[RMDB]
RNA sequence: GGGAACGACUCGAGUAGAGUCGAAAACAUGCCGGAACUCGACGCCGACAAGACGCCGUAUAACCCCUUCGAUCUUACCAAAGUAUGGCCCCAUGCCGACUAUCCGCCGAUCGAUAUUGGCGUGAUAACUCCCCUUUUACUUCGGUAAAAGGGGAGUAAAAGAAACAACAACAACAAC
Reactivity to DMS in 0.01 (KOAc 150mM, MgCl2 10mM, bicine 150mM(pH8.5), 24C), signal-to-noise 3, nucleotides 027 to 126: c100a130u010g020c030c010g020g000a100a120c050u000c040g000a110c110g030c020c010g000a090c090a090a090g010a060c050g030c040c020g010u010a070u010a160a140c050c010c000c060u000u000c060g020a050u000c050u000u000a080c070c040a030a080a100g010u010a040u020g020g000c060c020c050c070a060u010g010c050c040g000a100c140u000a010u000c030c020g000c010c060g010a050u010c300g000a060u010a130u000u010g000g040c000g030u000g000a030u000a030
Reactivity to 2A3 in 0.01 (KOAc 150mM, MgCl2 10mM, bicine 150mM(pH8.5), 24C), signal-to-noise 1, nucleotides 027 to 126: c010a010u080g000c000c000g020g080a070a040c040u020c070g070a030c060g040c030c010g020a020c020a020a020g090a030c060g020c020c000g010u080a030u190a200a120c000c000c000c000u020u000c010g060a080u010c020u030u100a040c050c030a060a030a040g070u020a050u110g050g000c000c040c030c040a010u060g030c010c010g020a030c010u030a020u020c000c010g000c000c020g050a040u060c060g040a020u020a020u300u030g010g000c000g010u020g000a000u000a000